[RMDB]
RNA sequence: GGGAACGACUCGAGUAGAGUCGAAAAUGACUCUGUAAACCUCUGCUGUGUUGUUGCACUGGUCGGCGUUUUGUCAGCCUGAGUAUUCAGCACAGCAGGGCUACAGAGACAUGAUCAUACUUCACUUUGAUAACGCUAAGUUCGCUUAGCGUUAUCAAAAAGAAACAACAACAACAAC
Reactivity to 2A3 in 0.01 (KOAc 150mM, MgCl2 10mM, bicine 150mM(pH8.5), 24C), signal-to-noise 1, nucleotides 027 to 126: u010g030a010c000u040c000u000g010u000a050a130a120c020c020u120c010u090g000c000u020g000u000g000u000u010g010u010u000g020c000a010c060u020g040g030u070c040g000g040c030g020u120u120u250u300g000u030c010a000g010c000c000u030g020a020g010u020a090u080u070c020a010g020c000a000c000a010g030c000a000g000g000g050c000u000a000c000a000g000a000g000a020c000a020u030g040a020u090c080a070u090a270c020u110u050c070a080c140u000u050
This 177-nucleotide RNA was probed chemically with 2A3. Source: RMDB library RFMREP, as collected in RNAgym. The RNA was probed in 150 mM KOAc, 10 mM MgCl2 and 150 mM bicine (pH 8.5) at 24 C.